RNA sequence: GGGAACGACUCGAGUAGAGUCGAAAACAACUUUUUUUUGUAGACUAAUGCUCUGCAAAGCCAGGAUGUUUUUGUAAGCCUGGCACUGAGAGAUUAAUUGAAAGAUAAAAUGCUUUUUCGAAGUAACGAAACAAAAGAAUUUCGAUUCUUUUGUUUCAAAAGAAACAACAACAACAAC
Reactivity to DMS in 0.01 (KOAc 150mM, MgCl2 10mM, bicine 150mM(pH8.5), 24C), signal-to-noise 3, nucleotides 027 to 126: c060a060a140c040u000u000u000u000u000u000u000u000g010u000a270g030a010c020u000a020a030u010g000c020u020c020u000g020c050a100a090a230g020c010c010a000g010g000a030u000g010u000u000u010u020u010g020u000a140a120g010c000c010u000g010g010c020a020c140u010g000a050g000a020g000a040u000u000a020a030u000u000g000a060a120a070g000a030u000a010a030a040a070u000g000c060u000u000u010u000u000c030g000a100a120g000u010a090a070c170
Reactivity to 2A3 in 0.01 (KOAc 150mM, MgCl2 10mM, bicine 150mM(pH8.5), 24C), signal-to-noise 4, nucleotides 027 to 126: c020a010a080c060u180u100u060u020u010u010u050u080g040u040a020g010a020c010u050a140a040u180g060c010u030c010u070g050c020a040a020a020g000c000c010a000g030g000a060u050g150u110u130u110u250u260g180u190a130a030g010c000c000u010g000g000c010a000c010u000g000a010g000a000g010a020u050u040a030a050u110u080g040a070a040a030g040a010u100a090a120a070a040u110g030c010u060u090u010u070u130c060g040a070a020g060u080a030a030c040
Chemical mapping of a 177-nucleotide RNA with DMS and 2A3.
It was measured as part of the RMDB library OK2TST.
For 2A3 the reverse transcriptase was SuperScript II with manganese.
The RNA was probed in 150 mM KOAc, 10 mM MgCl2 and 150 mM bicine (pH 8.5) at 24 C.